Description: Structure probing data (DMS and 2A3) for a 177-nucleotide construct. Conditions: 150 mM KOAc, 10 mM MgCl2 and 150 mM bicine (pH 8.5), 24 C. For DMS the reverse transcriptase was MarathonRT. Values cover nucleotides 27 to 126. The data come from the RNA Mapping Database (RMDB), library OK2TRN.
RNA sequence: GGGAACGACUCGAGUAGAGUCGAAAAGGCGCAGCUCUUGGCUCUCGCGUUUCCAAGGCCUCGAGCUCAAGGCCGAGCCGUUCGCACGGAUAGCGUACGUUCAUCAGUCGCCCGCGCUCGCUGAGCACAGCGAUCUUGUAUUCGUACAAGAUCGCUGAAAAGAAACAACAACAACAAC
Reactivity to DMS in 0.01 (KOAc 150mM, MgCl2 10mM, bicine 150mM(pH8.5), 24C), signal-to-noise 3, nucleotides 027 to 126: g020g030c040g000c180a070g010c010u000c040u000u020g020g030c020u010c030u000c090g010c070g010u000u000u010c010c000a170a100g000g000c010c010u000c070g010a060g020c010u010c100a120a110g010g000c020c010g010a070g010c080c010g010u000u000c040g020c060a060c090g000g000a120u010a080g010c030g020u010a050c040g000u010u000c090a100u010c080a030g010u000c030g010c000c010c070g020c140g000c030u000c060g010c110u010g000a060g010c070a300
Reactivity to 2A3 in 0.01 (KOAc 150mM, MgCl2 10mM, bicine 150mM(pH8.5), 24C), signal-to-noise 2, nucleotides 027 to 126: g040g010c060g030c190a020g000c020u020c010u040u050g010g010c010u000c010u010c110g090c070g040u000u030u000c030c020a010a030g040g010c030c010u030c000g010a020g000c000u000c050a060a040g120g000c010c020g010a010g000c000c010g020u090u090c060g030c050a050c090g040g130a190u100a120g070c030g020u100a040c030g030u090u110c030a160u020c010a080g080u070c010g000c010c030c020g070c000g020c010u050c000g150c100u120g010a030g050c010a000